[RMDB]
RNA sequence: GGGAACGACUCGAGUAGAGUCGAAAAACGUAGCCUGCCUUAUGGCGGACUGCAUAAAAUGGCGAAGGAAACAGGGAUGAUUUACCAGUCCCUGAGUCGUAUCAAGGUAGGGAAAACCAUCAACCCAACAUGGGAAACCAUUAAAAAGGUUAGUGAGCUUACUCCCAAUGUUCGCAUUGGGAGUAAGAAAAGAAACAACAACAACAAC
Reactivity to DMS in 0.01 (KOAc 150mM, MgCl2 10mM, bicine 150mM(pH8.5), 24C), signal-to-noise 2, nucleotides 027 to 156: a100c080g070u000a030g000c000c010u010g010c010c010u060u000a140u010g090g080c000g010g010a010c010u000g050c050a180u000a080a070a070a040u040g020g020c050g010a110a140g010g010a070a000a190c070a050g000g010g010a020u000g000a160u000u010u000a110c100c130a180g000u000c020c010c010u010g020a020g040u000c090g000u020a150u000c050a090a100g040g010u010a040g010g020g000a080a030a090a050c010c020a080u010c050a010a130c000c020c020a050a150c170a110u030g010g010g000a150a110a170c010c010a070u000u000a020a020a090a080a090g040g010u000u000a080g000u000g010a140g010
Reactivity to 2A3 in 0.01 (KOAc 150mM, MgCl2 10mM, bicine 150mM(pH8.5), 24C), signal-to-noise 2, nucleotides 027 to 156: a000c020g020u020a010g020c000c050u030g020c000c010u210u190a100u150g090g000c030g000g030a020c020u060g000c000a020u200a120a100a020a120u180g080g000c070g050a040a090g040g060a150a000a000c000a000g040g000g000a030u010g020a020u080u040u170a140c060c030a010g040u000c000c000c000u000g000a000g020u020c000g020u030a160u120c070a050a080g040g010u020a030g030g030g010a000a020a000a060c060c010a030u030c020a010a090c020c030c000a020a020c060a150u040g000g000g020a030a010a000c000c010a050u000u210a030a020a150a060a000g030g000u040u020a090g010u060g010a000g030